[RMDB]
RNA sequence: GGGAACGACUCGAGUAGAGUCGAAAAGGUCCUGUCUUCGGACAGGACCAAAUAAACUUGACAAGCGCGUCAAGAAAAAGCGCAAAAUAAAAGAACAAACUAAAACGAGGUCGUUCGCGACCUCGAACUUAUUAAGUGCGUUCGCGCACUUAAUAAGAAAAGAAACAACAACAACAAC
Reactivity to DMS in 0.01 (KOAc 150mM, MgCl2 10mM, bicine 150mM(pH8.5), 24C), signal-to-noise 2, nucleotides 027 to 126: g000g000u000c000c000u000g020u010c000u000u020c290g010g020a010c000a000g000g030a000c000c000a000a040a030u020a110a090a190c050u000u000g000a000c100a060a150g000c040g000c040g000u000c000a040a070g000a050a040a030a030a120g000c010g040c000a140a050a050a070u050a020a060a070a080g020a110a040c100a050a090a080c220u030a070a090a030a120c000g010a010g000g010u020c000g040u010u010c130g000c020g000a010c000c000u000c010g000a000a020
Reactivity to 2A3 in 0.01 (KOAc 150mM, MgCl2 10mM, bicine 150mM(pH8.5), 24C), signal-to-noise 2, nucleotides 027 to 126: g010g000u000c000c000u010g020u000c000u010u080c160g050g010a010c000a010g000g000a010c000c000a020a000a000u010a000a000a000c000u010u050g020a000c030a150a060g020c040g000c000g040u020c030a030a060g170a130a120a000a000a010g020c020g020c050a010a020a070a160u240a010a070a050a030g090a100a020c060a070a030a050c120u220a010a050a060a100c030g000a010g000g000u000c010g020u060u050c120g020c000g070a000c000c000u000c000g010a000a000